The data come from the RNA Mapping Database (RMDB), library M2PK50. Structure probing data (DMS and 2A3) for a 177-nucleotide construct. The DMS profile rests on 1,878 reads. As a SHAPE reagent, 2A3 marks flexible, mostly unpaired nucleotides at the ribose 2'-OH. DMS adducts were read by reverse transcription with MarathonRT. The reactions ran in a buffer of 150 mM KOAc, 10 mM MgCl2 and 150 mM bicine (pH 8.5), at 24 C.
RNA sequence: GGGAACGACUCGAGUAGAGUCGAAAAUGAGAAGCAUUCGUGCUUCUCAGAAAUGCUGCCCAAAGAGGACCUGGGGGUGUGUGGGCUGCUAAACUCAUCAGCUAACCGCGAUCUUCGGAUCGCGGAAAGAAACACAUGGUUUCGACCAUGUGUUUCUAAAAGAAACAACAACAACAAC
Reactivity to DMS in 0.01 (KOAc 150mM, MgCl2 10mM, bicine 150mM(pH8.5), 24C), signal-to-noise 2, nucleotides 027 to 126: u010g000a010g000a010a010g020c000a040u000u010c180g030u000g020c000u000u000c000u010c000a020g000a080a120a120u030g020c070u010g000c010c000c000a040a100a110g000a120g010g000a070c050c020u020g000g030g010g000g000u000g020u000g010u000g010g000g020c030u000g000c060u010a050a110a120c080u000c060a080u010c090a110g010c110u000a090a170c010c000g020c000g020a000u000c000u000u010c200g080g000a000u000c000g020c000g000g000a000a020
Reactivity to 2A3 in 0.01 (KOAc 150mM, MgCl2 10mM, bicine 150mM(pH8.5), 24C), signal-to-noise 1, nucleotides 027 to 126: u020g000a000g000a030a000g000c000a050u100u080c210g110u040g000c010u000u000c000u020c000a000g000a010a020a010u100g040c050u040g000c030c000c000a050a120a000g160a020g050g040a040c000c050u150g070g020g000g030g030u070g040u000g020u030g020g020g030c000u010g010c030u070a070a070a040c020u070c050a160u020c010a100g060c030u040a090a050c010c000g000c000g040a000u020c000u040u030c130g130g020a000u000c020g030c000g010g000a000a020